[RMDB]
RNA sequence: GGGAACGACUCGAGUAGAGUCGAAAAACUCUGUAUUGAUUGUUCUUGAACGACAUCAACCAUUGAUUUCAAAGAAGGACUACAAAAAGUAUCGAUCUUUUGUUUAUAAGUGGGUAAACCGUGAAUAAUAAAGGCUCAUUUUCGAAUGAGCCUUUAUAAAAGAAACAACAACAACAAC
Reactivity to DMS in 0.01 (KOAc 150mM, MgCl2 10mM, bicine 150mM(pH8.5), 24C), signal-to-noise 1, nucleotides 027 to 126: a100c020u000c030u010g040u000a100u010u000g000a060u000u010g030u010u000c000u000u020g030a110a070c030g000a060c070a130u010c080a080a230c030c020a010u010u000g020a070u000u010u000c000a010a030a040g000a070a100g000g010a040c110u010a070c130a070a080a120a080a090g000u010a080u000c000g010a130u010c000u000u000u000u000g010u010u000u000a050u000a050a030g000u000g020g030g010u000a040a100a070c190c040g000u000g000a040a060u010a100